[RMDB]
RNA sequence: GGGAACGACUCGAGUAGAGUCGAAAACUGGGGAGUCUAGUUUUGCCGAGCCUGUAGUUACUGUGGUGUCCCACUCGUCGGGCUUCUGCUCGGCAACUACAGCCUCGGCGAACGGCCGCGUUAGAAAAUGCUAGUACAGUUUCGACUGUACUAGCAUAAAAGAAACAACAACAACAAC
Reactivity to 2A3 in 0.01 (KOAc 150mM, MgCl2 10mM, bicine 150mM(pH8.5), 24C), signal-to-noise 1, nucleotides 027 to 126: c040u010g010g000g030g010a040g000u000c020u090a060g030u060u010u080u300g010c000c000g010a000g000c000c000u010g000u000a000g000u010u030a090c110u140g020u030g040g030u150g190u250c030c020c000a010c010u040c030g030u000c020g000g000g000c000u210u120c120u300g000c010u000c000g010g000c000a010a000c000u000a000c000a020g030c010c000u000c000g010g000c000g000a000a000c000g000g000c000c050g110c070g020u080u160a030g080a050a190a030
Reactivity to DMS in 0.01 (KOAc 150mM, MgCl2 10mM, bicine 150mM(pH8.5), 24C), signal-to-noise 3, nucleotides 027 to 126: c040u010g010g010g020g020a060g010u010c010u010a140g010u000u000u000u010g030c000c000g010a020g020c300c000u000g010u010a010g000u000u000a100c200u010g000u000g010g010u010g010u020c210c000c000a060c040u010c260g030u000c070g010g000g010c070u010u000c280u010g010c000u000c010g000g000c010a020a000c000u000a000c000a020g010c300c000u000c010g000g000c000g000a010a020c020g010g010c030c040g010c240g010u010u020a080g000a100a090a090